Chemical mapping of a 207-nucleotide RNA with 2A3. The data come from the RNA Mapping Database (RMDB), library VIROID. The reactions ran in a buffer of 150 mM KOAc, 10 mM MgCl2 and 150 mM bicine (pH 8.5), at 24 C.
RNA sequence: GGGAACGACUCGAGUAGAGUCGAAAAUUCCUUUCACCCUGCGUGGGUUGAGGCGGCUUAGCGGAUUAGGGCGUUCUGCCCCUGGGUACCUUUACCCUAUGUAAAGUAUGCAUGCGUGCUGGCUAGUGGGCUGCUCUACCCUAUCUGGUCGAGAGCUGGGUUUAUUCUAGUUCGCUAGAAUAAACCCAAAAGAAACAACAACAACAAC
Reactivity to 2A3 in 0.01 (KOAc 150mM, MgCl2 10mM, bicine 150mM(pH8.5), 24C), signal-to-noise 1, nucleotides 027 to 156: u020u000c020c020u030u050u060c060a030c020c020c040u130g020c200g080u180g040g040g000u000u080g010a030g070g000c110g030g000c010u030u050a080g060c040g070g000a170u080u200a080g050g000g000c050g080u060u000c000u140g030c000c000c000c000u050g000g000g000u070a050c020c020u000u150u090a000c000c000c060u120a080u180g040u000a000a040a090g020u030a030u090g040c000a020u020g060c010g050u020g050c000u000g000g090c000u010a040g020u300g050g000g000c000u090g060c000u030c000u050a160c000c000c040u060a050u020c090u050g040g000u050c000g020a000g000a010g120c050u060